[RMDB]
RNA sequence: GGGAACGACUCGAGUAGAGUCGAAAAACUUCAAAGCCAGGGGACGCCCUGCUGUAUAAGUAUAUGUAAUGUGCAACUGUUUGUUGCAGCUGCGAGAAUUAUACAAAUUGUGCAAUGAGCGGAACAUCACACGAGAUGAUGUUCUUGAGCUUAUUGAGGACGUUAAGUUUUUCGAAACUUAACGUCCAAAAGAAACAACAACAACAAC
Reactivity to DMS in 0.01 (KOAc 150mM, MgCl2 10mM, bicine 150mM(pH8.5), 24C), signal-to-noise 1, nucleotides 027 to 156: a060c040u010u010c040a160a170a080g000c060c060a140g000g010g000g020a100c170g000c040c040c000u000g000c000u030g010u000a040u000a040a100g020u000a070u000a080u000g020u010a070a140u010g000u000g030c010a020a020c010u000g000u000u010u000g000u030u000g010c000a060g070c000u030g000c010g010a250g020a160a080u000u000a020u000a020c040a040a130a170u010u010g000u000g000c060a070a010u000g000a000g010c030g010g000a060a020c000a020u000c000a000c020a280c140g020a300g020a110u000g020a040u020g000u000u000c010u000u010g020a130g050c010u000u000a020u010u020g010a140
Reactivity to 2A3 in 0.01 (KOAc 150mM, MgCl2 10mM, bicine 150mM(pH8.5), 24C), signal-to-noise 3, nucleotides 027 to 156: a000c080u250u140c140a160a020a030g060c100c030a000g000g020g040g000a070c080g130c000c000c000u000g020c030u000g030u000a030u010a020a060g060u060a030u000a060u250g130u100a190a110u160g060u040g070c000a000a000c020u020g090u250u160u120g020u090u040g000c000a000g060c020u030g000c060g020a040g050a140a130u070u050a020u000a070c030a030a050a070u110u200g030u050g060c000a000a010u010g000a000g000c030g000g000a000a000c000a000u000c000a010c000a010c040g120a080g060a270u030g010a000u000g000u000u000c000u050u040g020a010g000c000u000u020a000u010u010g010a050
Structure probing data (DMS and 2A3) for a 207-nucleotide construct. The RNA was probed in 150 mM KOAc, 10 mM MgCl2 and 150 mM bicine (pH 8.5) at 24 C. High DMS reactivity at an A or C suggests that its Watson-Crick edge is free. The DMS profile rests on 2,239 reads. For 2A3, 1,087 sequencing reads were counted.